[RMDB]
An RNA of 177 nucleotides, treated with 2A3 and DMS and read out base by base. The 2A3 profile rests on 15,080 reads. High DMS reactivity at an A or C suggests that its Watson-Crick edge is free. The RNA was probed in 150 mM KOAc, 10 mM MgCl2 and 150 mM bicine (pH 8.5) at 24 C.
RNA sequence: GGGAACGACUCGAGUAGAGUCGAAAAAUCUCGAAGAGACGAGCGGACGGUUGAUGGAUGGUGCAUAUGACUGUGCGUCCGCCAGCAGCUAGCAUUUUUAGCAGAUGAAUGCACUGAAAACAGGUAGGUAACGGUAUAGAUUCGUCUAUACCGUUACAAAAGAAACAACAACAACAAC
Reactivity to 2A3 in 0.01 (KOAc 150mM, MgCl2 10mM, bicine 150mM(pH8.5), 24C), signal-to-noise 8, nucleotides 027 to 126: a000u020c020u010c020g060a130a050g050a010g020a090c080g020a010g010c020g020g020a010c010g020g080u100u140g100a140u130g130g040a040u100g010g040u020g010c030a020u070a070u190g130a110c020u030g030u060g060c010g010u000c000c010g000c010c000a020g000c010a010g000c020u090a020g010c040a160u070u050u030u120u170a040g000c040a010g000a110u120g050a080a020u020g000c000a010c030u030g030a050a030a010a020c040a020g060g090u100a040g090
Reactivity to DMS in 0.01 (KOAc 150mM, MgCl2 10mM, bicine 150mM(pH8.5), 24C), signal-to-noise 9, nucleotides 027 to 126: a110u000c010u000c020g010a160a100g000a150g010a060c070g010a130g020c020g010g010a030c020g010g010u000u000g010a140u000g010g010a080u010g010g010u000g000c010a030u010a110u010g010a090c050u010g010u010g010c010g010u000c010c020g010c010c020a040g010c070a090g010c040u000a050g020c240a090u010u000u010u010u000a060g010c040a110g000a110u000g000a100a040u000g000c010a040c020u000g000a060a050a090a050c080a040g010g010u010a080g010